Description
Structure probing data (2A3) for a 207-nucleotide construct. The RNA was probed in 150 mM KOAc, 10 mM MgCl2 and 150 mM bicine (pH 8.5) at 24 C. It was measured as part of the RMDB library RSTRND.
RNA sequence: GGGAACGACUCGAGUAGAGUCGAAAAUUGCGAGCCGAGGGGUCGGCCUCGUAAAAACGCACAAGCCAAUAACUGGCAAAGAAAACAACAACUUCGCUCUAGCUGCAUAAGCUAAGCGGUCUCUCCUCUCCAUCGCCCAUGUGGAGUGGCUGAGACUGGUAGCUGAUAGGUUCGCCUAUCAGCUACCAAAAGAAACAACAACAACAAC
Reactivity to 2A3 in 0.01 (KOAc 150mM, MgCl2 10mM, bicine 150mM(pH8.5), 24C), signal-to-noise 1, nucleotides 027 to 156: u110u010g030c020g030a020g000c020c020g040a060g020g110g030g040u190c020g030g040c040c000u000c000g000u040a000a000a030a030a080c150g090c020a110c030a200a000g000c010c000a010a050u120a260a080c090u060g010g000c020a000a080a000g060a000a070a000a030c110a050a000c050a060a050c030u010u010c010g000c000u030c020u020a010g000c010u040g000c110a090u150a300a000g000c000u000a000a010g010c000g000g000u000c000u010c000u000c010c000u030c000u000c000c000a010u080c090g160c020c010c010a020u110g000u010g000g010a000g030u010g000g000c110u050g000a000g000a000c000u000